[RMDB]
RNA sequence: GGGAACGACUCGAGUAGAGUCGAAAAGAGUAGCAUAAGCUCUCCUUUGACAUCUUCACCAACCUCUCAUCGUUCCCUUCUCUGUAAUAACGUCGUUUUGCAAAACUGCAAUGGUCCUGAGCCGAUACGUUAGACUCUAGUUCGCUAGAGUCUAACGAAAAGAAACAACAACAACAAC
Reactivity to 2A3 in 0.01 (KOAc 150mM, MgCl2 10mM, bicine 150mM(pH8.5), 24C), signal-to-noise 2, nucleotides 027 to 126: g020a010g070u230a020g020c080a090u080a300a070g020c020u010c010u010c000c010u000u010u030g010a040c020a240u000c030u110u070c040a110c160c010a030a100c000c000u030c000u000c000a040u010c000g000u020u000c010c020c010u000u040c020u000c010u030g050u050a030a070u020a070a090c040g050u000c020g000u040u020u050u100g000c040a040a070a110a180c100u030g000c050a000a110u070g030g000u000c000c020u060g010a020g010c020c000g040a060u050a140
Reactivity to DMS in 0.01 (KOAc 150mM, MgCl2 10mM, bicine 150mM(pH8.5), 24C), signal-to-noise 2, nucleotides 027 to 126: g000a040g030u000a070g060c020a200u000a180a130g010c010u000c020u010c060c060u010u000u000g020a010c030a060u000c030u000u020c040a150c240c100a070a090c160c050u000c010u010c150a150u010c020g010u000u000c030c000c000u000u000c040u010c030u000g020u000a120a060u000a020a090c120g030u000c050g000u000u000u000u000g000c010a030a060a110a120c180u000g000c090a030a030u000g010g010u000c010c040u010g010a100g020c030c040g000a140u000a130
Structure probing data (2A3 and DMS) for a 177-nucleotide construct. It was measured as part of the RMDB library RFMREP. For 2A3, 2,138 sequencing reads were counted. DMS adducts were read by reverse transcription with MarathonRT. Reactivities are given for positions 27 through 126.